RNA sequence: GGGAACGACUCGAGUAGAGUCGAAAAUAGGUCUGUGCCUCAUCCUAUGUAAAAUGCCUCCAUCCUAACAGACAUUUAUUGACUAUCUUAGCCAGGUAUUACAGUGAUAAGGAAUUUGUCACUUUACCUCAAACCACAAGGUCUUCAGAAUCAAGAGUAAUCAGUCUAAUUUCGAUUAGACUGAUUAAAAAGAAACAACAACAACAAC
Reactivity to DMS in 0.01 (KOAc 150mM, MgCl2 10mM, bicine 150mM(pH8.5), 24C), signal-to-noise 5, nucleotides 027 to 156: u000a040g030g020u000c030u000g010u000g000c010c000u010c030a110u000c020c030u000a050u000g010u010a060a070a090a110u000g000c010c000u000c030c050a130u000c050c030u010a080a150c080a070g010a040c020a080u000u000u000a090u010u010g020a070c040u000a090u000c080u000u000a050g030c050c060a070g020g010u010a050u000u000a070c140a070g030u010g010a020u000a030a050g030g020a090a170u010u000u010g020u000c000a020c010u000u010u000a050c020c010u000c040a050a070a100c050c050a100c090a060a080g020g000u000c010u000u000c030a080g020a090a100u010c050a040a100g010a180g010
Reactivity to 2A3 in 0.01 (KOAc 150mM, MgCl2 10mM, bicine 150mM(pH8.5), 24C), signal-to-noise 7, nucleotides 027 to 156: u110a010g020g010u010c040u040g080u090g020c000c010u040c020a060u020c010c010u080a080u110g080u160a050a120a070a090u120g020c010c000u020c030c010a050u020c010c010u030a040a010c020a020g080a010c010a050u080u150u090a120u100u130g030a030c030u050a060u130c030u070u050a020g020c040c010a010g030g000u020a030u100u120a100c070a020g000u000g000a000u010a030a030g110g050a200a170u060u030u020g000u000c000a000c000u010u040u020a020c000c000u040c050a110a090a080c030c020a030c020a060a040g010g000u010c000u050u050c050a060g040a110a030u080c050a100a040g030a020g090